[RMDB]
RNA sequence: GGGAACGACUCGAGUAGAGUCGAAAAUUAAAGGGGCGCGUGACAGGGUUGCUACCCAACAAGGUCAGAUUCUUGCAGGUGCAGGGUAUGAUUUGCAUGAUGGGCGCCAGUAUAGGAAAAUAACAAGAGAUGCGUUGCCAUUUCCUCAUAAUUGGCACCAAUACGCAUAUUUCGAUAUGCGUAUUGGAAAAGAAACAACAACAACAAC
Reactivity to DMS in 0.01 (KOAc 150mM, MgCl2 10mM, bicine 150mM(pH8.5), 24C), signal-to-noise 2, nucleotides 027 to 156: u010u000a010a120a150g010g040g030g020c030g040c070g020u000g030a220c050a130g020g040g020u000u000g000c060u010a100c020c010c010a130a080c040a080a090g010g030u010c020a100g000a120u010u000c010u000u000g010c030a120g000g030u000g040c020a070g000g020g010u000a040u000g000a110u020u000u010g000c030a120u000g010a110u000g010g000g030c050g010c010c010a050g020u000a060u010a030g030g000a050a020a080a050u000a010a040c060a050a050g000a100g030a120u000g010c100g030u010u000g010c050c030a150u000u000u000c020c020u000c080a060u000a040a150u000u020g020g030c030a300
Reactivity to 2A3 in 0.01 (KOAc 150mM, MgCl2 10mM, bicine 150mM(pH8.5), 24C), signal-to-noise 3, nucleotides 027 to 156: u140u060a100a030a020g010g000g030g020c060g000c020g040u030g070a020c060a050g040g020g000u030u140g000c060u100a050c030c020c000a010a050c040a090a010g010g000u030c000a010g020a090u120u050c020u010u090g020c060a070g050g130u130g090c000a010g000g040g000u070a050u070g040a050u020u050u100g050c080a050u040g040a050u060g060g040g050c010g000c020c000a000g030u040a030u030a050g030g060a050a020a030a040u140a070a030c060a060a050g020a020g030a080u060g030c020g060u050u050g020c030c010a010u010u040u020c000c030u070c050a050u070a220a030u050u040g020g000c010a000